[RMDB]
RNA sequence: GGGAACGACUCGAGUAGAGUCGAAAAGAUAUGGACACGGUUGCACCAACGAAGAACUGCCUACCCACCCAAAUGUCGGAAACGACAUCUUGGAGGGCAGGGAGUUGGUGCAACCGUGUCCUAAGUCCAACAUUAGAGGCUUCGGCCUCUAAUGUUGAAAAGAAACAACAACAACAAC
Reactivity to DMS in 0.01 (KOAc 150mM, MgCl2 10mM, bicine 150mM(pH8.5), 24C), signal-to-noise 1, nucleotides 027 to 126: g000a070u000a290u000g000g000a040c000a010c000g040g000u000u000g000c000a030c020c000a000a000c060g020a210a160g000a140a250c080u010g000c000c000u000a160c060c030c100a300c070c010c000a010a050a060u000g010u000c000g020g000a040a100a200c000g010a000c010a000u000c250u010u020g000g000a160g000g030g000c000a030g010g010g030a100g020u010u000g030g000u000g000c010a000a010c020c000g070u000g000u000c000c010u030a010a080g000u010c030